Structure probing data (DMS and 2A3) for a 177-nucleotide construct. The RNA was probed in 150 mM KOAc, 10 mM MgCl2 and 150 mM bicine (pH 8.5) at 24 C. For 2A3 the reverse transcriptase was SuperScript II with manganese. It was measured as part of the RMDB library TTRDES.
RNA sequence: GGGAACGACUCGAGUAGAGUCGAAAAGAUAUGGAGGAUGACCCGUCGCGAAACGUCAGUAUCGGAAACGAUACGACGGAGACGCAUCCUCCUAAGUCAAACAGAGUAGGCUUCGGCCUACUCUGAAUCCAUGAUCGUAGUUCGCUACGAUCAUGGAAAAAGAAACAACAACAACAAC
Reactivity to DMS in 0.01 (KOAc 150mM, MgCl2 10mM, bicine 150mM(pH8.5), 24C), signal-to-noise 2, nucleotides 027 to 126: g000a000u000a010u010g000g000a010g000g000a010u010g000a140c300c300c100g000u000c000g040c300g010a060a030a110c020g020u000c000a090g030u000a010u000c020g060g000a010a000a000c010g010a020u010a010c000g000a000c010g030g000a010g010a000c010g000c000a020u010c000c000u000c000c000u020a000a070g000u000c010a180a160a290c020a010g000a000g000u000a030g000g020c010u000u000c290g040g030c000c000u000a010c000u000c000u000g020a050a060
Reactivity to 2A3 in 0.01 (KOAc 150mM, MgCl2 10mM, bicine 150mM(pH8.5), 24C), signal-to-noise 2, nucleotides 027 to 126: g010a000u010a000u030g020g000a000g010g000a000u010g120a160c120c160c140g010u010c000g010c110g280a260a020a000c000g010u020c040a150g010u000a000u010c010g000g000a000a010a000c000g030a000u000a000c010g000a000c000g000g000a030g000a000c020g010c030a020u020c000c000u000c000c000u010a010a000g010u010c010a000a080a000c010a000g010a030g010u010a000g010g020c010u110u100c300g100g000c000c000u000a000c010u020c000u000g000a000a010